This 207-nucleotide RNA was probed chemically with 2A3. For 2A3, 1,609 sequencing reads were counted. 2A3 adducts were read by reverse transcription with SuperScript II with manganese. The RNA was probed in 150 mM KOAc, 10 mM MgCl2 and 150 mM bicine (pH 8.5) at 24 C.
[RMDB]
RNA sequence: GGGAACGACUCGAGUAGAGUCGAAAAGGGGUCGCAGUGCGAGUCCAUCGAUCGAAGAGGUGGAGUAUGUCUGAAGCCUCCACGGACAUACGCUGACUCUUCGGGAGGACUCGGCACUGCGACGGAGGCACCCAAAACUACUUGUUCGCAAGUAGAAGAUAUUGUCGUCGUUCGCGACGACAAUAUCAAAAGAAACAACAACAACAAC
Reactivity to 2A3 in 0.01 (KOAc 150mM, MgCl2 10mM, bicine 150mM(pH8.5), 24C), signal-to-noise 2, nucleotides 027 to 156: g040g010g020g000u010c000g000c000a010g020u030g060c000g020a000g020u000c000c020a170u300c000g000a010u000c000g000a000a010g010a010g000g030u260g010g030a030g000u000a010u000g010u000c000u010g050a130a010g000c010c000u050c010c010a020c020g010g000a000c000a000u020a010c050g000c160u220g150a020c010u000c010u010u010c000g000g000g000a000g000g000a000c000u000c000g030g020c000a000c010u300g000c000g000a000c000g000g040a000g000g000c000a040c000c000c020a010a060a040a100c000u010a000c000u010u050g060u150u160c300g010c170a000a030g000u010a000g060a040a020